[RMDB]
RNA sequence: GGGAACGACUCGAGUAGAGUCGAAAAUAUCGAUCUGGUGGUUCCCCUCGUGGCCAAAGGGGUGCUCUAUGGGAUCCUCAUCCUGGGAGACAGGAUCGACGGGGAACCCAUCAGCCAGUACGAGAAGCAUAGGCAACGUAUUCGUACGUUGCCUAUGAAAAGAAACAACAACAACAAC
Reactivity to 2A3 in 0.01 (KOAc 150mM, MgCl2 10mM, bicine 150mM(pH8.5), 24C), signal-to-noise 3, nucleotides 027 to 126: u120a020u020c010g010a070u030c010u000g040g020u060g030g000u030u010c000c000c000c000u010c010g070u090g150g040c030c020a090a070a090g040g010g000g040u110g030c010u040c030u140a270u140g020g000g070a030u030c000c030u010c040a050u020c000c010u000g000g030g040a270g060a090c020a020g000g020a030u030c040g070a100c140g010g000g000g010a010a020c020c000c000a020u020c010a010g010c020c000a040g010u120a050c020g000a010g020a100a000g060
Reactivity to DMS in 0.01 (KOAc 150mM, MgCl2 10mM, bicine 150mM(pH8.5), 24C), signal-to-noise 5, nucleotides 027 to 126: u000a100u000c020g020a280u000c010u010g010g020u010g010g030u000u010c010c010c000c010u000c030g020u010g010g000c060c070a080a120a090g010g000g010g010u000g030c050u000c150u010a090u010g020g010g000a070u000c070c040u010c070a100u000c000c010u000g010g000g020a150g020a190c030a030g000g000a120u000c090g010a060c170g030g000g010g000a020a020c040c020c190a030u000c250a110g010c060c020a050g010u010a150c030g000a040g000a100a090g000